Annotation
The record gives the reactivity of an RNA of 207 nucleotides to 2A3 and DMS. Reactivities are given for positions 27 through 156. For DMS, 4,104 sequencing reads were counted. Reactivities are rounded to 0.1 and cut off at 0 and 3. The reactions ran in a buffer of 150 mM KOAc, 10 mM MgCl2 and 150 mM bicine (pH 8.5), at 24 C.

RNA sequence: GGGAACGACUCGAGUAGAGUCGAAAAUCGAUGCGUUAACCGACAUUAUUCCGUCGGUGGAUGAUGUAAAAACGGCGUUCAAUAAUCUGAAAGAUGACGCGAGCGCGGCGAUCAGUGGCAUUCAGACGGCUGUCUCGAAUGAAGUCCAGCCGAUUACGACGAAUACAAGGUUCGCCUUGUAUUCGUCAAAAGAAACAACAACAACAAC
Reactivity to 2A3 in 0.01 (KOAc 150mM, MgCl2 10mM, bicine 150mM(pH8.5), 24C), signal-to-noise 4, nucleotides 027 to 156: u040c050g000a020u060g020c020g040u050u090a080a100c020c040g000a020c020a040u120u210a130u300u150c090c130g070u040c030g050g050u040g020g010a020u030g000a030u090g030u110a020a080a040a000a020c060g030g000c000g040u050u050c050a110a090u140a120a090u070c040u090g110a130a100a060g090a060u090g020a010c020g020c030g080a010g000c030g000c000g060g010c010g000a020u040c010a020g050u050g090g000c010a000u060u010c000a080g020a080c000g020g010c040u070g030u060c000u010c040g100a120a150u280g030a130a000g020u000c070c010a020g020c020c000g040a020u030u120a050c140
Reactivity to DMS in 0.01 (KOAc 150mM, MgCl2 10mM, bicine 150mM(pH8.5), 24C), signal-to-noise 2, nucleotides 027 to 156: u000c040g000a060u000g030c000g030u000u010a100a050c020c000g020a040c010a060u000u000a090u010u010c020c040g000u010c100g030g010u000g010g030a020u000g010a080u000g000u000a040a080a080a110a060c020g000g000c000g030u010u020c030a110a060u000a090a070u010c040u000g000a080a130a240g000a130u020g000a040c040g020c120g020a080g020c040g010c010g020g030c020g010a080u000c040a090g010u010g000g000c050a110u030u010c020a140g030a270c000g000g000c060u000g010u000c010u000c050g020a100a130u010g020a050a110g020u010c000c010a100g030c000c000g010a160u010u020a100c070